[RMDB]
RNA sequence: GGGAACGACUCGAGUAGAGUCGAAAAGGAACCACUUCGGUGGUUCCAAAAAAGAUAUGGAUCUCGUAAGCGCGAUAAGCAGAUCAUCGGAAACGAUGAUCUGCUUUUGACGCGUAUCGAGAUCCUAAGUCAAAAAACCACUCCUUCGGGAGUGGAAGCAAUAAACUUAGUUCGCUAAGUUUAUUGCAAAAGAAACAACAACAACAAC
Reactivity to 2A3 in 0.01 (KOAc 150mM, MgCl2 10mM, bicine 150mM(pH8.5), 24C), signal-to-noise 2, nucleotides 027 to 156: g010g000a010a000c020c010a020c010u050u050c210g140g000u030g000g000u000u020c000c010a000a000a000a000a000a010g020a010u000a010u050g000g000a000u000c020u020c030g010u060a300a300g190c000g000c040g060a200u170a160a000g000c020a010g000a000u000c000a000u000c000g000g000a040a020a010c010g000a010u000g000a000u000c000u000g000c000u000u000u000u000g010a000c050g010c000g000u000a000u010c000g000a010g000a000u000c000c000u000a010a010g000u030c040a000a000a000a000a140a120c000c020a000c000u000c000c010u000u050c220g080g000g000a010g000u000g010g000a000a010
Reactivity to DMS in 0.01 (KOAc 150mM, MgCl2 10mM, bicine 150mM(pH8.5), 24C), signal-to-noise 1, nucleotides 027 to 156: g000g000a050a010c000c000a000c000u000u020c300g000g070u000g030g030u000u010c020c000a040a020a040a080a040a060g000a100u000a300u000g000g010a010u000c010u000c000g020u000a040a180g040c000g000c020g000a090u020a000a010g030c000a010g000a010u010c000a010u000c000g040g010a150a230a230c000g000a000u000g010a000u000c000u000g010c020u000u000u000u000g010a090c000g020c000g020u000a040u000c040g000a000g010a010u010c010c020u000a000a120g010u020c020a000a030a040a090a080a150c010c000a000c000u000c000c000u020u000c300g030g010g020a040g050u010g000g010a000a060